[RMDB]
RNA sequence: GGGAACGACUCGAGUAGAGUCGAAAAUUUGCAUGGUGGACACCAGAAAGGAGUACGCACCAAUCUAUGAUGUGUAGCUGCGGUAGGUAGAUCCAAGCAGUUCCUGAAUGAUGAUAGGUCCACAUCAGUCCGUCGACCAUUUCGAUGGUCGAUGGACAAAAGAAACAACAACAACAAC
Reactivity to 2A3 in 0.01 (KOAc 150mM, MgCl2 10mM, bicine 150mM(pH8.5), 24C), signal-to-noise 6, nucleotides 027 to 126: u110u080u100g130c080a070u120g070g000u000g000g000a010c030a030c040c020a020g060a040a060a010g010g000a030g030u090a030c070g020c000a000c020c040a070a030u140c110u230a200u190g060a060u080g020u000g010u030a030g030c000u010g020c000g110g020u090a110g060g000u060a090g050a230u060c020c020a030a020g000c010a000g010u050u010c000c000u070g040a150a050u040g050a010u020g030a030u040a150g070g030u000c000c000a000c000a000u030c010a020
Reactivity to DMS in 0.01 (KOAc 150mM, MgCl2 10mM, bicine 150mM(pH8.5), 24C), signal-to-noise 6, nucleotides 027 to 126: u030u020u010g000c100a090u000g000g020u000g000g010a060c060a100c080c000a050g010a120a130a030g000g010a050g050u010a020c020g030c000a010c030c020a040a130u050c240u060a130u030g000a010u000g010u000g010u010a160g040c010u000g010c030g010g040u020a110g000g020u010a070g000a210u060c030c010a140a120g000c020a020g000u010u010c000c000u000g000a130a150u020g000a120u020g000a160u010a090g000g020u000c010c010a030c010a060u020c070a080